[RMDB]
RNA sequence: GGGAACGACUCGAGUAGAGUCGAAAAAGCUACGCAGAAGACGGGUGAUUUCUGCAUUUCCAUCUGUGGUACCAGGUUCAUCUCACUAGGGAGUGCCAGACAGUGGGCGCAGGUCAGUGGGUGCGCGCACCGUGUGUGAGCCGAAGCAGGGCGAGGCGCUUGGAGCUUAGUUCGCUAAGCUCCAAGCAAAAGAAACAACAACAACAAC
Reactivity to 2A3 in 0.01 (KOAc 150mM, MgCl2 10mM, bicine 150mM(pH8.5), 24C), signal-to-noise 1, nucleotides 027 to 156: a010g070c070u140a040c100g000c010a030g000a040a000g060a040c090g040g030g040u090g070a100u020u030u040c000u010g000c000a020u080u050u070c040c010a020u060c060u100g070u050g100g010u020a050c000c060a000g000g020u050u060c000a060u000c060u000c080a060c120u090a100g010g000g010a050g010u080g090c040c020a030g060a070c040a030g000u020g010g100g000c000g000c020a020g000g060u090c020a030g130u110g090g040g000u030g000c060g000c010g050c030a000c070c080g010u050g000u000g010u010g070a010g030c030c000g010a040a000g000c010a010g030g000g000c040g000a040g070g000c070
An RNA of 207 nucleotides, treated with 2A3 and read out base by base. Reactivities are given for positions 27 through 156. It was measured as part of the RMDB library OK3TST.